[RMDB]
RNA sequence: GGGAACGACUCGAGUAGAGUCGAAAAGAUAUGGACGGCAUAGGGAGCGUUAUCGGAAACGAUGACGCGAGGAUCUAUGUCCGUCCUAAGUCAAACGAGCCGUUACCGUUCGCGGUAACGGCUCGAACUUACUAAUUGCGUUCGCGCAAUUAGUAAGAAAAGAAACAACAACAACAAC
Reactivity to DMS in 0.01 (KOAc 150mM, MgCl2 10mM, bicine 150mM(pH8.5), 24C), signal-to-noise 4, nucleotides 027 to 126: g010a040u000a300u000g000g000a020c000g000g000c000a010u000a010g000g010g010a040g020c000g010u000u000a000u010c010g010g000a130a080a150c010g010a010u000g010a000c000g010c000g010a030g030g000a040u000c000u000a000u000g000u010c000c000g010u000c000c000u010a010a080g000u000c020a070a110a260c020g000a010g020c000c000g000u000u000a000c010c000g020u000u010c190g020c020g000g000u010a000a000c010g000g000c000u000c010g000a010a060
Reactivity to 2A3 in 0.01 (KOAc 150mM, MgCl2 10mM, bicine 150mM(pH8.5), 24C), signal-to-noise 1, nucleotides 027 to 126: g020a010u070a050u190g000g000a020c000g000g010c010a000u000a000g000g010g000a020g000c000g020u010u000a010u020c000g010g060a070a050a040c020g010a000u000g010a000c000g040c010g010a020g010g020a000u000c000u010a000u000g030u050c000c010g010u000c000c000u000a010a010g000u000c010a000a030a180c020g020a010g000c000c010g000u010u000a010c020c010g000u060u110c300g000c040g180g000u030a000a000c010g000g030c000u010c000g000a010a000